Source: RMDB library OK3TST, as collected in RNAgym. Structure probing data (2A3) for a 207-nucleotide construct. Conditions: 150 mM KOAc, 10 mM MgCl2 and 150 mM bicine (pH 8.5), 24 C. The 2A3 profile rests on 980 reads. 2A3 adducts were read by reverse transcription with SuperScript II with manganese.

RNA sequence: GGGAACGACUCGAGUAGAGUCGAAAACACGAACGUGGACGACCCGUCUUCCUAUUUCCCGACCGAUGCCUCCCUGGAGGCCAUGCUGGAGACGAUCGGUGUUUCGUCCUCGGCGCCGUCGACCACCGCGGACGAUCUGACAACGUCGGGCCUCGUGUCACUGUACGGAUUUCGAUCCGUACAGUGAAAAAGAAACAACAACAACAAC
Reactivity to 2A3 in 0.01 (KOAc 150mM, MgCl2 10mM, bicine 150mM(pH8.5), 24C), signal-to-noise 2, nucleotides 027 to 156: c080a000c050g090a140a020c080g050u080g020g030a010c020g070a080c000c000c050g030u030c010u160u140c000c000u100a200u020u090u030c040c000c050g050a030c000c030g030a060u040g030c010c010u010c010c000c010u060g120g010a020g000g150c000c000a070u180g000c000u090g000g020a050g010a010c050g090a070u060c090g000g020u050g060u060u170u040c010g000u000c020c000u000c000g010g000c040g090c050c000g110u140c070g030a120c070c040a020c050c000g020c060g050g000a030c060g000a010u010c080u140g100a040c060a150a070c030g010u010c020g000g030g000c010c010u050c000g040u070g020